An RNA of 177 nucleotides, treated with DMS and 2A3 and read out base by base.
For 2A3, 663 sequencing reads were counted.
Source: RMDB library RFMREP, as collected in RNAgym.
For DMS the reverse transcriptase was MarathonRT.
For 2A3 the reverse transcriptase was SuperScript II with manganese.
RNA sequence: GGGAACGACUCGAGUAGAGUCGAAAAGAGCAAAUCUAUAAAAUAUGUCCCAGUUCGGAUUGUUCUCUGCAACUCGAGAGCAUGAAGCCGGAAUCGCUAGUAAUCGCAAAUCAGCCAUGUUGCGGUGGAAAGAAAGACUGUUCGCAGUCUUUCUUUCAAAAGAAACAACAACAACAAC
Reactivity to DMS in 0.01 (KOAc 150mM, MgCl2 10mM, bicine 150mM(pH8.5), 24C), signal-to-noise 1, nucleotides 027 to 126: g000a070g010c110a060a030a080u000c030u000a120u030a110a050a130a240u000a120u000g000u010c010c010c000a080g010u000u010c030g010g010a100u010u000g010u000u000c030u030c010u010g030c140a100a100c150u000c130g040a020g000a030g000c010a030u010g020a180a190g010c050c020g020g020a070a030u010c110g020c120u000a050g000u010a020a010u000c020g010c030a030a030a070u010c050a080g000c130c150a040u000g030u000u010g000c030g000g020u000g010
Reactivity to 2A3 in 0.01 (KOAc 150mM, MgCl2 10mM, bicine 150mM(pH8.5), 24C), signal-to-noise 1, nucleotides 027 to 126: g140a000g020c050a200a060a140u050c060u120a210u150a170a010a080a140u150a090u110g010u000c070c010c000a010g050u030u020c000g060g020a080u010u050g010u020u000c000u020c000u190g030c040a150a050c090u060c150g020a020g010a010g000c000a030u070g080a030a020g010c060c000g000g020a010a110u120c070g010c050u020a050g000u020a080a020u010c020g000c000a030a050a080u080c060a090g030c100c030a180u190g040u000u030g000c000g000g040u040g090